[RMDB]
RNA sequence: GGGAACGACUCGAGUAGAGUCGAAAAUCGCAGCUGCCAAGUCAUGGCGGAGGGAAUCCUUGCGGCAGAGAUUGCUCCCUUUUUUAAAGGGAAUGGUGUUGUGCAGGAUCAGAUAUCUCUGACAAAAAACAGUACUCUAGUUCGCUAGAGUACUGUUAAAAGAAACAACAACAACAAC
Reactivity to DMS in 0.01 (KOAc 150mM, MgCl2 10mM, bicine 150mM(pH8.5), 24C), signal-to-noise 4, nucleotides 027 to 126: u010c050g020c060a090g010c030u000g000c020c040a060a160g010u010c200a090u000g010g000c010g020g010a080g000g000g000a110a060u010c020c010u000u000g010c100g000g000c020a030g000a050g000a040u000u000g010c140u000c010c000c000u000u000u000u010u000u000a030a020a030g000g000g010a040a050u010g020g010u000g000u000u000g020u000g010c090a070g010g000a080u000c050a080g000a090u000a060u000c030u000c010u010g010a080c080a010a060a050a090
Reactivity to 2A3 in 0.01 (KOAc 150mM, MgCl2 10mM, bicine 150mM(pH8.5), 24C), signal-to-noise 2, nucleotides 027 to 126: u070c010g010c070a000g030c010u060g000c020c010a130a090g120u170c100a170u160g030g000c040g030g020a030g060g020g020a080a060u060c020c020u040u090g050c020g030g000c010a000g030a000g000a090u050u140g020c000u000c000c000c040u010u000u010u000u000u080a040a000a000g030g000g020a010a040u060g050g030u060g060u140u140g070u090g010c030a030g020g080a070u040c020a020g050a100u100a110u070c040u000c020u060g020a030c020a000a080a020a000